RNA sequence: GGGAACGACUCGAGUAGAGUCGAAAACUACAAGCAGGGCAUCUACCAGCCAUAUCUGAUCGCAUGCCAGAUUCCCAAGCCCUUUCACGGCGUGGUGCCCAGCUCCGUGUCGAUGGUGGAGAAGGAGACGGCUAUUAACUUUCGAGUUAAUAGCCGUAAAAGAAACAACAACAACAAC
Reactivity to 2A3 in 0.01 (KOAc 150mM, MgCl2 10mM, bicine 150mM(pH8.5), 24C), signal-to-noise 1, nucleotides 027 to 126: c010u100a060c020a060a010g010c010a040g030g020g000c030a020u000c030u060a060c030c070a020g050c050c000a050u060a030u090c080u070g030a030u070c040g000c090a010u100g020c030c000a050g000a130u040u000c030c000c000a020a040g050c000c040c020u080u120u060c050a040c090g010g000c010g030u000g000g080u050g000c000c060c000a040g000c000u000c030c030g000u030g000u010c020g040a090u040g040g070u080g010g020a100g010a050a010g070g020a050g040
Reactivity to DMS in 0.01 (KOAc 150mM, MgCl2 10mM, bicine 150mM(pH8.5), 24C), signal-to-noise 2, nucleotides 027 to 126: c080u010a060c130a080a120g020c070a080g010g010g000c050a040u000c030u000a070c070c060a130g010c030c030a060u000a040u000c050u000g000a050u020c060g030c100a030u000g000c030c020a080g000a140u010u010c010c000c020a090a150g000c060c000c040u010u000u010c050a110c090g000g030c090g010u000g020g000u010g000c010c020c030a170g000c030u000c040c050g020u010g000u010c060g010a050u000g010g000u000g010g010a060g010a070a080g000g000a120g010